[RMDB]
RNA sequence: GGGAACGACUCGAGUAGAGUCGAAAACGCUAUAGAUUCGUCUAUAGCGACUCCUACGCGCCGGCCGGUGCGCGCGGUAGGUGACGCAAACCACCGUGCGAAAUGUACUGGUUUUCGAACCAGUAAAUACUACGGGGUAUUUCGAUACCCCGUAGUAAAAAGAAACAACAACAACAAC
Reactivity to 2A3 in 0.01 (KOAc 150mM, MgCl2 10mM, bicine 150mM(pH8.5), 24C), signal-to-noise 2, nucleotides 027 to 126: c000g000c000u020a000u010a010g030a000u040u020c180g020u000c110u010a010u000a000g020c000g030a020c000u030c000c010u020a050c050g000c030g000c010c020g150g000c050c300g000g000u030g020c020g000c010g000c000g020g000u110a250g010g040u050g060a090c120g020c260a100a010a000c000c000a000c010c010g010u010g000c010g040a060a030a040u170g010u040a000c000u000g030g030u010u000u020u110c160g090a000a010c000c000a010g000u010a000a040a020
Reactivity to DMS in 0.01 (KOAc 150mM, MgCl2 10mM, bicine 150mM(pH8.5), 24C), signal-to-noise 3, nucleotides 027 to 126: c020g000c000u000a000u000a000g000a040u000u020c200g010u010c000u000a000u000a000g000c010g000a060c120u000c030c020u000a060c090g000c020g020c020c020g010g010c090c040g020g010u000g000c080g000c000g010c010g010g010u000a090g030g020u000g000a160c240g010c270a070a150a060c010c010a050c000c000g040u000g010c020g000a050a110a050u000g030u000a020c000u000g000g000u000u000u000u010c140g010a010a020c010c000a010g000u000a000a100a130